[RMDB]
RNA sequence: GGGAACGACUCGAGUAGAGUCGAAAAGCGGCACUAUAACCGUCGAGUCCGGCUGCCACCUCGUCCAGGUCGACGUCGGAGCUCAGCGGGAUCGACUUGCCAGCGGUGCGCAGGAUUUCGCGGCGAGCGCACCGUUCCCUUUCGAGGGAACGGUGCGAAAAGAAACAACAACAACAAC
Reactivity to DMS in 0.01 (KOAc 150mM, MgCl2 10mM, bicine 150mM(pH8.5), 24C), signal-to-noise 2, nucleotides 027 to 126: g020c030g010g040c000a120c170u000a010u020a120a200c050c030g020u000c110g000a050g000u010c000c000g010g000c000u010g020c140c240a040c060c000u000c140g020u060c210c140a210g010g010u010c110g000a060c120g010u010c000g000g010a050g010c030u000c000a100g000c010g000g000g000a100u020c050g010a020c010u000u020g000c040c050a100g000c090g000g000u000g000c110g030c040a110g020g000a100u010u020u040c050g010c040g000g000c070g000a160g000
Reactivity to 2A3 in 0.01 (KOAc 150mM, MgCl2 10mM, bicine 150mM(pH8.5), 24C), signal-to-noise 3, nucleotides 027 to 126: g040c040g070g010c010a010c050u060a040u040a240a100c020c000g030u060c030g000a010g040u000c000c010g030g000c020u040g040c010c010a040c020c010u070c040g120u070c080c040a040g010g060u080c020g020a010c010g050u060c020g010g040a060g060c010u010c030a000g000c020g000g010g050a050u060c010g050a040c010u010u050g030c020c020a030g010c040g010g010u060g020c040g000c020a080g020g040a100u100u110u070c040g010c000g020g020c030g000a020g030

Annotation: The data come from the RNA Mapping Database (RMDB), library OK1LIB. An RNA of 177 nucleotides, treated with DMS and 2A3 and read out base by base. For 2A3, 2,503 sequencing reads were counted. For DMS the reverse transcriptase was MarathonRT.